[RMDB]
RNA sequence: GGGAACGACUCGAGUAGAGUCGAAAAUUGAUUUUGAAGUAAGGCGGUGCGCUGGUAGGAACCCUCGGUUAGCACCGCAGACGUCAACUACAGCACUGUAUCGAACAGCAUUUCAGCAGCUUCGCCAGGGCUCCAUAAAUUUCGAUUUAUGGAGCCCAAAAGAAACAACAACAACAAC
Reactivity to DMS in 0.01 (KOAc 150mM, MgCl2 10mM, bicine 150mM(pH8.5), 24C), signal-to-noise 1, nucleotides 027 to 126: u000u010g010a060u020u000u010u000g000a080a070g000u010a050a190g000g040c020g000g020u000g020c040g000c040u000g010g080u030a080g020g020a070a140c100c040c070u030c040g000g020u000u000a190g010c030a050c030c000g000c010a020g000a020c100g000u000c010a050a050c180u000a080c060a050g010c050a090c040u000g000u010a060u000c060g020a030a020c100a070g060c060a070u000u010u000c060a080g010c050a110g010c060u000u010c040g000c140c070a100